[RMDB]
Notes:
This 207-nucleotide RNA was probed chemically with 2A3. It was measured as part of the RMDB library OK3TST. The 2A3 profile rests on 1,854 reads. For 2A3 the reverse transcriptase was SuperScript II with manganese.
RNA sequence: GGGAACGACUCGAGUAGAGUCGAAAACAGCCCAAUCAAGUUGACACUCAGUAUUAACUAUCACAGUGGUGAUGACUGUUUUGGAGAGAAAUAAAUAGGGGAAGGAGGAUAUAGCGUGUGUGUGGGGAUGGAUACCGCAGUCUUAGAUAGGGUGGGCACCUUCGAAUGUAUUCGUACAUUCGAAGGUAAAAGAAACAACAACAACAAC
Reactivity to 2A3 in 0.01 (KOAc 150mM, MgCl2 10mM, bicine 150mM(pH8.5), 24C), signal-to-noise 4, nucleotides 027 to 156: c070a030g050c030c020c010a000a100u170c060a060a080g080u090u110g090a020c020a010c080u040c040a030g050u050a130u200u130a080a090c080u050a060u200c060a050c040a140g170u170g110g030u050g070a040u050g060a060c030u000g020u060u070u080u080g020g010a040g020a010g030a020a120a000u220a080a100a080u180a090g020g010g020g020a080a030g020g020a040g000g050a020u080a040u060a150g040c080g000u060g010u020g000u000g060u100g050g000g000g020a020u050g000g000a030u030a060c000c040g040c030a030g040u020c040u020u070a040g010a140u090a040g040g010g010u100g010g040g020c020